[RMDB]
RNA sequence: GGGAACGACUCGAGUAGAGUCGAAAAAGGCACUUCGCAAUGUAUGCUCAAACAUUGCUUAUUCAAACACGCUUCACAAUGUGCGACAAAGAAACAUUGUUAUAAGAGCUAAUGUUUUAACAUUGGCAAAACCGAGUUAGCUUCGGCUAACUCGGAAGAAAUCUUACGCGUUCGCGCGUAAGAUUUCAAAAGAAACAACAACAACAAC
Reactivity to 2A3 in 0.01 (KOAc 150mM, MgCl2 10mM, bicine 150mM(pH8.5), 24C), signal-to-noise 3, nucleotides 027 to 156: a000g110g010c060a040c100u120u060c100g020c020a000a000u020g000u020a030u150g060c010u060c110a090a140a000c030a030u010u010g020c020u040u100a110u080u160c100a070a130a040c060a010c040g010c000u000u000c000a010c000a010a000u020g000u000g010c010g100a120c110a110a150a030g090a010a030a000c000a010u000u010g020u100u070a170u050a110a120g030a010g020c000u000a000a020u020g030u010u140u080u220a150a030c000a010u000u000g020g000c010a000a130a000a000c000c000g010a010g010u000u000a010g020c000u020u020c220g010g000c000u010a000a000c000u000c000g000g000a000a000

This 207-nucleotide RNA was probed chemically with 2A3.
The reactions ran in a buffer of 150 mM KOAc, 10 mM MgCl2 and 150 mM bicine (pH 8.5), at 24 C.
The 2A3 profile rests on 1,336 reads.